Overview
An RNA of 207 nucleotides, treated with 2A3 and DMS and read out base by base. The 2A3 profile rests on 1,149 reads. For DMS the reverse transcriptase was MarathonRT.

[RMDB]
RNA sequence: GGGAACGACUCGAGUAGAGUCGAAAACAUGCUGCAUAAAACCUGUGAUUCACUGUUUUUACCAUUUUUUCUAUCACUAGAUGCAGAGCUUUGAGGGAAGUGGACAUCGCGCCGUUCAUUCCUGAGGAAACGAUAAGCUGUACGCCACGAGUGCCGCAGCGUGAGAGAAUUUCGAUUCUCUCACGCUAAAAGAAACAACAACAACAAC
Reactivity to 2A3 in 0.01 (KOAc 150mM, MgCl2 10mM, bicine 150mM(pH8.5), 24C), signal-to-noise 3, nucleotides 027 to 156: c030a040u110g000c010u010g000c030a000u080a150a150a070a090c010c040u030g020u020g040a100u090u140c080a050c130u110g130u030u050u050u110u170a100c030c030a150u050u070u010u030u060u050c060u030a080u050c010a020c050u060a020g020a100u030g000c000a000g030a020g100c010u060u090u170g070a050g030g040g000a070a140g090u070g040g000a020c020a030u070c060g020c050g000c160c010g030u010u050c030a090u020u020c010c030u060g010a030g010g110a170a080a050c070g050a100u040a130a020g010c000u030g090u040a020c020g050c060c020a050c100g040a040g010u040g040c000c030g090c030
Reactivity to DMS in 0.01 (KOAc 150mM, MgCl2 10mM, bicine 150mM(pH8.5), 24C), signal-to-noise 1, nucleotides 027 to 156: c030a190u000g030c070u000g030c000a100u000a100a070a110a020c050c010u000g040u000g000a090u000u000c060a120c060u000g020u000u000u010u000u020a110c030c020a080u010u000u000u010u000u000c030u000a050u000c000a060c010u000a060g000a110u000g030c070a100g000a100g020c070u010u000u000g000a300g020g000g000a030a100g020u010g050g020a030c070a100u000c070g030c070g030c010c050g000u000u000c000a040u000u010c010c030u020g010a160g030g010a010a120a060c100g000a070u000a030a080g040c020u000g020u000a060c030g030c000c010a050c110g000a170g000u000g010c000c020g000c050